This 177-nucleotide RNA was probed chemically with 2A3 and DMS. Source: RMDB library OK1LIB, as collected in RNAgym.
RNA sequence: GGGAACGACUCGAGUAGAGUCGAAAAAGCGCAUCGGUCUCGGGUGGUUGCGGGUUCGGCUGGCCCGAUUUGUCCCGACCCGUCAGCACACGGUUCAGCACGGCGACGGCGACGGUCGCAGCAGUCGGAAUCUCGGUACAUUCGUGUACCGAGAUUCAAAAGAAACAACAACAACAAC
Reactivity to 2A3 in 0.01 (KOAc 150mM, MgCl2 10mM, bicine 150mM(pH8.5), 24C), signal-to-noise 3, nucleotides 027 to 126: a000g050c030g010c000a030u050c040g070g000u000c020u020c010g040g000g000u070g020g060u020u050g020c010g000g000g000u040u060c000g030g000c020u040g050g020c000c000c000g020a050u050u030u250g070u040c020c000c000g020a030c000c000c010g050u060c010a040g040c040a060c000a000c100g070g000u140u080c040a000g030c050a020c070g020g040c030g010a030c020g030g000c010g050a070c030g050g000u020c040g010c010a020g000c000a010g030u040c000g040
Reactivity to DMS in 0.01 (KOAc 150mM, MgCl2 10mM, bicine 150mM(pH8.5), 24C), signal-to-noise 2, nucleotides 027 to 126: a050g000c070g010c070a130u000c010g000g010u030c020u000c040g010g000g020u000g040g020u010u000g040c050g030g050g030u010u000c030g000g000c030u000g010g020c000c230c030g000a080u030u010u040g020u010c000c000c010g010a150c280c010c020g000u000c100a160g020c060a040c100a090c060g000g020u030u010c120a130g000c100a040c040g000g000c060g030a070c050g010g000c100g010a070c060g000g020u020c000g040c170a050g000c020a000g000u000c040g010
The reactions ran in a buffer of 150 mM KOAc, 10 mM MgCl2 and 150 mM bicine (pH 8.5), at 24 C.